This 177-nucleotide RNA was probed chemically with 2A3 and DMS.
RNA sequence: GGGAACGACUCGAGUAGAGUCGAAAAGAAUAAAUAGUGUCUUGGAGCGCGCGGUGUAAACAUAUAUGGUUCAUAUAUGUCCGUAGGCACGUAAAGAAAGCGCGUCUAAGCGAGAGAAGACUCGCAAAUCGGUAGUGCGAUUCGUCGCACUACCGAUAAAAGAAACAACAACAACAAC
Reactivity to 2A3 in 0.01 (KOAc 150mM, MgCl2 10mM, bicine 150mM(pH8.5), 24C), signal-to-noise 2, nucleotides 027 to 126: g070a030a030u200a100a110a000u130a000g000u000g020u000c000u010u190g120g020a040g040c000g000c000g000c000g020g070u100g060u230a030a150a010c000a000u000a000u000a020u000g210g030u100u210c010a000u000a000u000a000u000g010u000c000c000g000u000a020g000g000c020a000c000g030u080a040a240a000g070a040a050a000g010c000g000c020g010u000c040u050a100a080g000c000g000a000g000a000g040a150a000g080a060c000u000c000g000c000a000a120
Reactivity to DMS in 0.01 (KOAc 150mM, MgCl2 10mM, bicine 150mM(pH8.5), 24C), signal-to-noise 1, nucleotides 027 to 126: g040a150a130u020a070a050a110u030a080g010u000g000u010c050u000u000g000g000a150g000c000g000c000g000c010g000g000u060g010u000a010a160a170c000a000u000a000u000a010u000g000g000u010u090c000a010u000a020u010a010u030g030u000c000c060g000u000a050g050g040c000a000c000g000u010a070a140a100g040a020a120a030g120c000g000c000g020u000c010u040a170a110g010c000g020a000g000a120g010a160a000g050a040c000u000c000g000c000a080a090
About this RNA:
The DMS profile rests on 1,413 reads. The reactions ran in a buffer of 150 mM KOAc, 10 mM MgCl2 and 150 mM bicine (pH 8.5), at 24 C. Reactivities are given for positions 27 through 126. It was measured as part of the RMDB library OK1LIB.